Chemical mapping of a 177-nucleotide RNA with DMS and 2A3. The 2A3 profile rests on 1,992 reads. Values cover nucleotides 27 to 126. DMS adducts were read by reverse transcription with MarathonRT. The reactions ran in a buffer of 150 mM KOAc, 10 mM MgCl2 and 150 mM bicine (pH 8.5), at 24 C. It was measured as part of the RMDB library OK1LIB.
RNA sequence: GGGAACGACUCGAGUAGAGUCGAAAAUUGAGGCGGGUGGGUUGUGAGGGCGGGGCUUCCCUUACAGUACGGGAGCCUGAACAACUGGCUGUUUCCCACCCGCAAGAAUUCGAGGCUAGUUGGCCAAAACUCCCGGGACAUUCGUGUCCCGGGGGUUAAAAGAAACAACAACAACAAC
Reactivity to DMS in 0.01 (KOAc 150mM, MgCl2 10mM, bicine 150mM(pH8.5), 24C), signal-to-noise 2, nucleotides 027 to 126: u010u030g020a130g030g030c040g020g050g030u010g060g000g010u040u020g000u000g000a070g000g000g010c160g030g020g000g000c040u010u010c000c010c030u010u050a050c160a090g020u010a070c300g000g010g010a020g010c000c000u000g000a040a020c100a040a120c060u000g000g000c000u000g000u020u030u000c030c000c010a030c000c000c010g010c010a010a010g010a120a070u030u020c100g010a100g010g010c060u000a110g010u000u000g010g000c010c010a090a110
Reactivity to 2A3 in 0.01 (KOAc 150mM, MgCl2 10mM, bicine 150mM(pH8.5), 24C), signal-to-noise 2, nucleotides 027 to 126: u080u090g040a000g100g010c050g010g040g020u080g000g060g000u040u010g040u040g000a080g000g030g000c050g000g010g020g000c000u110u120c000c000c000u040u040a100c020a020g070u040a030c050g010g000g010a000g000c000c000u010g040a040a020c010a010a010c000u010g040g000c010u040g070u080u090u030c020c010c000a020c000c000c000g010c000a010a000g000a010a020u180u130c030g000a040g020g000c010u010a050g030u000u000g050g030c010c000a000a100